[RMDB]
RNA sequence: GGGAACGACUCGAGUAGAGUCGAAAAGAAGGGUGAAAGCCCUUGAUACUGUAGUGGAAAUUAUAAAUAAGAAGAGUUCUGAGUUGCUUAAGCAGAACUACAAUAAAAAGACAAGCAUUAUUACAAACAUGGCGAGGUAAGUUCGCUUACCUCGCAACAUGAGUAGCAGCUUCGGCUGCUACUCAUGAAAAGAAACAACAACAACAAC
Reactivity to 2A3 in 0.01 (KOAc 150mM, MgCl2 10mM, bicine 150mM(pH8.5), 24C), signal-to-noise 1, nucleotides 027 to 156: g030a000a000g000g000g040u060g010a060a070a000g010c000c000c020u000u020g020a040u070a130c060u140g110u170a010g010u040g070g040a080a050a070u060u020a090u220a290a070a060u120a170a060g010a030a020g010a000g030u000u000c000u010g080a100g100u180u070g070c030u140u040a060a000g040c010a000g000a000a000c000u050a020c000a000a010u130a080a040a020a000a000g110a040c110a000a000g000c000a000u040u000a000u010u030a130c010a040a090a000c000a070u110g080g000c000g000a000g000g000u000a010a010g000u000u110c190g040c040u010u000a000c000c010u030c000g000c020a000a000
Chemical mapping of a 207-nucleotide RNA with 2A3. The reactions ran in a buffer of 150 mM KOAc, 10 mM MgCl2 and 150 mM bicine (pH 8.5), at 24 C. Values cover nucleotides 27 to 156. The 2A3 profile rests on 621 reads. The data come from the RNA Mapping Database (RMDB), library M2RFPK.